[RMDB]
RNA sequence: GGGAACGACUCGAGUAGAGUCGAAAAUACGUGACCUUCGGGUCACGUAACCGGCGUUCGCAAGUCAAAAAGAGAGACGCAAUCUCGACAGCGGCCUUUUCGUAUGAGUUGCUUUCGAGCAACUCAAAGGAGCAAAAUAGUUCGCUAUUUUGCUCCUAAAAGAAACAACAACAACAAC
Reactivity to 2A3 in 0.01 (KOAc 150mM, MgCl2 10mM, bicine 150mM(pH8.5), 24C), signal-to-noise 1, nucleotides 027 to 126: u070a000c000g000u000g010a000c000c000u010u040c200g040g010g000u000c000a000c010g000u010a000a000c000c000g050g050c050g080u220u240c020g000c050a170a120g010u050c040a050a110a080a180a050g070a010g020a000g050a040c050g000c150a020a150u010c010u010c050g030a020c020a060g000c000g060g000c020c020u100u070u070u160c030g000u110a040u230g000a010g010u000u020g000c060u050u010u070c120g070a000g000c000a000a000c000u030c000a000a020
Reactivity to DMS in 0.01 (KOAc 150mM, MgCl2 10mM, bicine 150mM(pH8.5), 24C), signal-to-noise 2, nucleotides 027 to 126: u000a000c000g040u000g000a000c000c000u000u010c180g030g030g020u000c000a010c000g000u000a010a040c050c010g020g010c090g010u010u000c040g040c010a090a110g010u010c050a070a060a120a100a150g000a130g000a030g010a070c120g000c140a140a160u020c020u000c010g020a100c170a090g000c040g000g010c040c040u010u000u000u020c080g020u000a100u000g000a010g010u000u000g010c000u000u000u010c200g000a020g020c000a000a000c010u000c000a010a060